Conditions: 150 mM KOAc, 10 mM MgCl2 and 150 mM bicine (pH 8.5), 24 C. This 177-nucleotide RNA was probed chemically with DMS and 2A3. It was measured as part of the RMDB library OK2TRN. The DMS profile rests on 10,114 reads. 2A3 adducts were read by reverse transcription with SuperScript II with manganese.

[RMDB]
RNA sequence: GGGAACGACUCGAGUAGAGUCGAAAAAGUGCGGCGGCCAGCGCCGGAUCCGACGUCGCGAAGAGCGCGCCGUUCUCGUCGAGCAGCGUGAGGGCGUCGCGAACGCCGCCGCGCACGGCGCCGACGACCUAUUAGUCGCAUUCGUGCGACUAAUAGGAAAAGAAACAACAACAACAAC
Reactivity to DMS in 0.01 (KOAc 150mM, MgCl2 10mM, bicine 150mM(pH8.5), 24C), signal-to-noise 6, nucleotides 027 to 126: a090g010u010g020c010g010g000c000g020g020c010c060a140g020c050g020c060c010g010g000a110u000c120c060g000a060c010g010u000c010g030c060g000a120a120g010a170g010c000g010c000g010c020c010g000u000u000c030u000c210g000u010c140g000a120g010c050a080g000c020g010u000g000a110g000g000g000c020g010u000c020g000c090g000a040a050c150g020c010c000g010c060c040g020c010g010c000a060c100g000g010c020g010c010c010g000a040c040g010a160
Reactivity to 2A3 in 0.01 (KOAc 150mM, MgCl2 10mM, bicine 150mM(pH8.5), 24C), signal-to-noise 7, nucleotides 027 to 126: a000g170u160g020c010g010g000c030g060g100c020c050a050g010c020g000c030c010g000g020a100u060c030c030g060a050c010g030u020c020g000c050g260a160a070g040a050g120c020g000c000g010c020c000g020u050u020c060u020c050g270u070c060g010a080g050c070a030g020c040g030u040g050a110g020g070g000c010g010u040c020g000c050g010a030a010c070g030c020c000g030c020c010g000c000g000c000a020c040g030g000c020g000c010c010g030a040c020g030a030